This 177-nucleotide RNA was probed chemically with 2A3. It was measured as part of the RMDB library OK1LIB. The reactions ran in a buffer of 150 mM KOAc, 10 mM MgCl2 and 150 mM bicine (pH 8.5), at 24 C.
RNA sequence: GGGAACGACUCGAGUAGAGUCGAAAAUCGGAGGCCAGGUCCAUGGUCACCGUGGGUAUCUGCAUCGGUAGGCUGGCGCUGUUCGGUGGUGUCUCGAUGGUGGCUAUUUGGCGCUGCUGGUGCAGCACCUAGGCCGCACUUUCGAGUGCGGCCUAGGAAAAGAAACAACAACAACAAC
Reactivity to 2A3 in 0.01 (KOAc 150mM, MgCl2 10mM, bicine 150mM(pH8.5), 24C), signal-to-noise 2, nucleotides 027 to 126: u070c010g000g010a060g000g000c010c000a040g130g130u130c110c000a150u030g000g000u020c010a010c020c000g010u030g040g000g030u090a040u050c020u070g080c030a030u000c010g060g000u030a010g090g000c000u030g020g000c000g000c050u040g070u130u160c020g020g020u120g080g070u090g150u030c080u040c050g010a000u040g000g040u030g000g000c000u030a170u130u200u220g020g000c210g000c040u000g000c000u030g070g000u060g020c000a000g000c000a070